This 177-nucleotide RNA was probed chemically with DMS and 2A3. For DMS, 2,538 sequencing reads were counted. High 2A3 reactivity points to a flexible backbone, as in loops and unpaired stretches. For 2A3, 2,666 sequencing reads were counted. Reactivities are given for positions 27 through 126. The RNA was probed in 150 mM KOAc, 10 mM MgCl2 and 150 mM bicine (pH 8.5) at 24 C.
RNA sequence: GGGAACGACUCGAGUAGAGUCGAAAACGCUGCAGUUCAAACGCCGCUACCCCGAGAUGUUCACCGCCUACGAAAAGGCGUGCAAACGCGGCGAAGUUACCAUCGGCAAGAUGUUCGUCGUCGACACUCCGUCAUGUAUCUUCGGAUACAUGACGGAAAAAGAAACAACAACAACAAC
Reactivity to DMS in 0.01 (KOAc 150mM, MgCl2 10mM, bicine 150mM(pH8.5), 24C), signal-to-noise 2, nucleotides 027 to 126: c110g070c060u000g000c000a100g010u000u000c130a070a150a250c080g000c000c030g000c050u000a120c030c000c000c000g000a080g020a020u010g010u000u000c040a140c070c030g000c020c020u000a110c100g020a100a090a030a050g040g010c010g000u030g000c140a090a130a100c170g000c000g000g040c020g000a010a110g030u020u010a120c300c040a050u050c060g020g000c190a060a000g000a000u000g020u000u000c030g010u000c010g000u000c020g000a070c220a050c150
Reactivity to 2A3 in 0.01 (KOAc 150mM, MgCl2 10mM, bicine 150mM(pH8.5), 24C), signal-to-noise 4, nucleotides 027 to 126: c070g000c020u030g020c020a060g020u100u110c090a060a070a060c100g000c040c010g020c020u060a100c020c000c000c000g030a020g020a100u090g040u100u070c010a030c050c040g010c000c010u120a140c150g080a060a030a090a000g000g000c000g000u050g040c030a010a040a000c050g000c000g000g000c010g020a020a020g080u140u160a090c080c030a020u030c010g110g040c080a100a070g010a030u040g020u070u020c010g020u020c000g040u060c010g030a010c030a000c090

Background:
2A3 adducts were read by reverse transcription with SuperScript II with manganese.